[RMDB]
RNA sequence: GGGAACGACUCGAGUAGAGUCGAAAAGUACUAUGCCCGCCAUUAUUGAUGCAUGCUGCACCUCCCACUCCUUAAUAGUUGCUUUGAAGUUUCCUUUCGGUGGGUUCUGCAGCGUCUUUAUCAGAAAAUAUAGUAUACGGUUCGCCGUAUACUAUAUAAAAGAAACAACAACAACAAC
Reactivity to DMS in 0.01 (KOAc 150mM, MgCl2 10mM, bicine 150mM(pH8.5), 24C), signal-to-noise 6, nucleotides 027 to 126: g010u000a050c090u010a060u010g010c020c010c030g020c160c150a100u010u000a080u000u010g010a050u000g010c210a040u000g010c010u000g010c000a020c040c020u010c000c000c000a050c030u000c100c100u000u010a060a060u000a060g010u000u010g000c030u000u000u000g010a080a160g010u000u000u000c030c020u000u010u000c110g000g020u000g010g000g010u000u000c030u000g020c010a010g010c000g010u000c030u000u000u010a050u010c040a100g000a100a060a070
Reactivity to 2A3 in 0.01 (KOAc 150mM, MgCl2 10mM, bicine 150mM(pH8.5), 24C), signal-to-noise 3, nucleotides 027 to 126: g020u030a060c060u080a080u160g060c010c020c030g050c050c030a150u180u170a060u150u230g010a030u050g050c070a020u050g000c010u000g000c000a000c010c020u000c010c010c010a000c020u100c010c010u090u070a090a020u050a220g030u040u090g000c020u120u060u140g080a170a020g020u000u080u080c020c000u050u060u060c020g020g000u000g000g010g000u020u020c010u010g010c000a000g010c000g000u020c000u020u170u130a080u060c020a020g110a020a080a030
Structure probing data (DMS and 2A3) for a 177-nucleotide construct. The DMS profile rests on 8,557 reads. Reactivities are given for positions 27 through 126.